[RMDB]
RNA sequence: GGGAACGACUCGAGUAGAGUCGAAAAGGAAGAAAAGAGGGUCUGAGAGCGGUGGGCAUGGGAACAUGGAGGAAAGCCCAAACUCUUCUUCGCCUCUAGAACUAGGGGCUGAGAUUUGGUUUCCUUGUACCUAAGAGAAUUUCGAUUCUCUUAGGUAAAAAGAAACAACAACAACAAC
Reactivity to DMS in 0.01 (KOAc 150mM, MgCl2 10mM, bicine 150mM(pH8.5), 24C), signal-to-noise 9, nucleotides 027 to 126: g000g010a080a060g010a080a050a060a080g010a100g000g000g010u010c100u010g000a080g000a080g010c120g010g010u020g000g000g010c070a070u010g000g010g010a100a080c100a060u020g000g010a050g000g000a060a070a100g010c060c010c020a050a060a180c060u010c030u010u000c040u000u000c300g010c000c000u000c000u000a020g010a090a110c150u000a010g000g000g000g000c000u000g000a010g000a040u000u010u000g000g000u000u000u000c010c020u000u010g010
Reactivity to 2A3 in 0.01 (KOAc 150mM, MgCl2 10mM, bicine 150mM(pH8.5), 24C), signal-to-noise 5, nucleotides 027 to 126: g020g010a010a040g040a030a080a020a010g080a070g020g030g020u070c100u150g060a040g010a010g120c040g020g070u110g040g030g010c050a080u070g010g000g010a050a060c030a060u080g060g020a020g010g030a070a020a020g040c010c000c000a020a050a060c050u040c010u090u020c000u060u060c040g000c000c000u000c000u010a030g040a130a040c140u020a010g000g010g010g000c020u030g010a010g000a030u050u040u080g050g000u000u010u020c000c000u000u030g040
Chemical mapping of a 177-nucleotide RNA with DMS and 2A3. Values are in units of 0.01, from 0 to 300, in steps of 10. 2A3 is a SHAPE reagent: it acylates the 2'-hydroxyl of flexible nucleotides of all four kinds. Values cover nucleotides 27 to 126. It was measured as part of the RMDB libraries RFM100 and RFMREP.